[RMDB]
RNA sequence: GGGAACGACUCGAGUAGAGUCGAAAAUGGGCUUUCGAGCCCACAUGAUCCUAAGUCGGAUAGAGGGCUAUGCUAGCCAGUGUCGGAAACGACAUAAUGGCUUGGACCAUAGCCUCCCCACCUAUCCGAUAUGGACGACACGUCUGUUCGCAGACAAAUUAUUGACAUGAUUCGUCAUGUCAAUAAUAAAAGAAACAACAACAACAAC
Reactivity to DMS in 0.01 (KOAc 150mM, MgCl2 10mM, bicine 150mM(pH8.5), 24C), signal-to-noise 5, nucleotides 027 to 156: u000g010g020g020c010u000u010u000c180g040a050g020c000c010c000a010c030a020u000g000a190u000c000c000u000a100a260g010u000c030g030g010a060u000a030g010a300g000g010g010c010u010a010u000g030c030u000a030g020c000c000a070g010u000g000u000c000g020g000a150a110a300c000g000a040c010a010u000a050a160u000g030g020c000u010u010g040g010a130c220c020a050u010a030g000c020c010u000c270c070c040c080a300c170c010u000a050u000c010c000g020a030u000a160u010g000g000a060c000g010a170c080a050c060g010u000c000u000g020u000u000c170g030c000a030g000a050c010a110a150
Reactivity to 2A3 in 0.01 (KOAc 150mM, MgCl2 10mM, bicine 150mM(pH8.5), 24C), signal-to-noise 8, nucleotides 027 to 156: u060g020g010g000c040u130u140u160c300g090a010g070c000c120c010a020c010a030u130g030a140u020c000c000u050a170a050g030u000c000g000g000a000u000a010g020a020g010g000g000c000u000a000u010g010c020u020a000g000c000c010a010g020u000g010u000c000g020g060a120a070a100c010g010a010c010a010u140a130a200u040g000g000c000u020u090g060g030a040c120c000a000u000a000g000c000c000u020c000c000c000c000a030c000c000u000a000u000c000c000g000a000u000a020u040g000g000a010c010g030a030c060a020c230g010u010c010u020g060u100u100c300g010c100a010g000a010c000a020a090
Structure probing data (DMS and 2A3) for a 207-nucleotide construct.
The DMS profile rests on 11,025 reads.
The 2A3 profile rests on 15,986 reads.